[RMDB]
RNA sequence: GGGAACGACUCGAGUAGAGUCGAAAAGAGAUGCUAGGAGUCGGGAGAGGUCAGAACGACUGGGAAAGAAAAGAGAGCAACGGGGCUAGCUGCCGGGUGUUCCACCUACGGGAACGGUGCCGAGUGACUCUUGAAGUAAGUUCGCUUACUUCAAGAGAAAAGAAACAACAACAACAAC
Reactivity to DMS in 0.01 (KOAc 150mM, MgCl2 10mM, bicine 150mM(pH8.5), 24C), signal-to-noise 3, nucleotides 027 to 126: g000a100g020a060u000g000c030u000a070g020g010a070g000u010c060g010g020g000a080g010a090g000g010u000c030a070g010a130a140c120g000a080c050u010g000g020g010a060a070a090g000a040a070a100a090g000a070g000a070g010c050a060a070c100g010g000g000g010c040u000a060g000c060u000g000c040c040g000g000g020u000g000u000u000c040c020a070c070c040u010a120c160g000g010g010a060a040c060g010g010u000g020c010c030g000a100g010u000g010a160
Reactivity to 2A3 in 0.01 (KOAc 150mM, MgCl2 10mM, bicine 150mM(pH8.5), 24C), signal-to-noise 2, nucleotides 027 to 126: g030a010g000a010u080g020c030u070a050g080g000a030g010u020c050g020g020g000a050g010a020g000g040u040c040a030g040a130a040c030g060a010c040u040g000g050g030a120a090a050g090a030a070a030a000g070a000g020a000g020c010a040a040c060g000g040g010g020c000u040a010g010c020u020g070c030c010g040g000g000u050g010u070u000c030c020a070c000c030u050a040c050g030g000g010a040a040c040g000g020u040g040c000c020g010a030g040u040g020a030